[RMDB]
RNA sequence: GGGAACGACUCGAGUAGAGUCGAAAACUGCUGCCGGGUGGCGGUGGGGUGACCCGCACGGUACGGAUGUUCGGCAUCCAGAACGCGUUCGUGAGCGUGCUGGCGCAAGGUACCCGGUUCAAGCCGGCGAAUACGAUCUUUUCGAAGAUCGUAUUCGAAAAGAAACAACAACAACAAC
Reactivity to 2A3 in 0.01 (KOAc 150mM, MgCl2 10mM, bicine 150mM(pH8.5), 24C), signal-to-noise 5, nucleotides 027 to 126: c020u030g020c020u040g000c000c010g140g050g100u130g050g080c040g020g080u100g020g060g010g040u060g070a260c000c000c000g000c010a030c030g020g140u080a020c020g010g000a040u060g030u090u150c040g070g000c060a100u070c050c010a050g050a110a020c030g020c030g050u020u040c040g020u060g090a080g150c010g010u020g000c010u020g000g000c020g000c040a030a030g100g010u060a050c000c020c000g040g000u080u130c120a080a010g040c010c020g060g030
Reactivity to DMS in 0.01 (KOAc 150mM, MgCl2 10mM, bicine 150mM(pH8.5), 24C), signal-to-noise 6, nucleotides 027 to 126: c030u000g000c030u000g020c000c010g010g010g020u010g000g020c040g010g040u000g010g000g010g020u010g000a140c020c000c040g020c020a030c020g000g000u000a050c040g010g010a020u000g000u000u000c060g010g000c070a100u010c110c090a090g010a060a040c040g010c070g010u000u000c060g010u000g000a090g020c010g010u000g010c000u000g000g010c110g000c050a110a080g000g020u000a070c080c000c000g000g010u010u000c160a090a120g010c010c060g000g000
Chemical mapping of a 177-nucleotide RNA with 2A3 and DMS. Conditions: 150 mM KOAc, 10 mM MgCl2 and 150 mM bicine (pH 8.5), 24 C. The DMS profile rests on 14,575 reads. Source: RMDB library OK2TRN, as collected in RNAgym.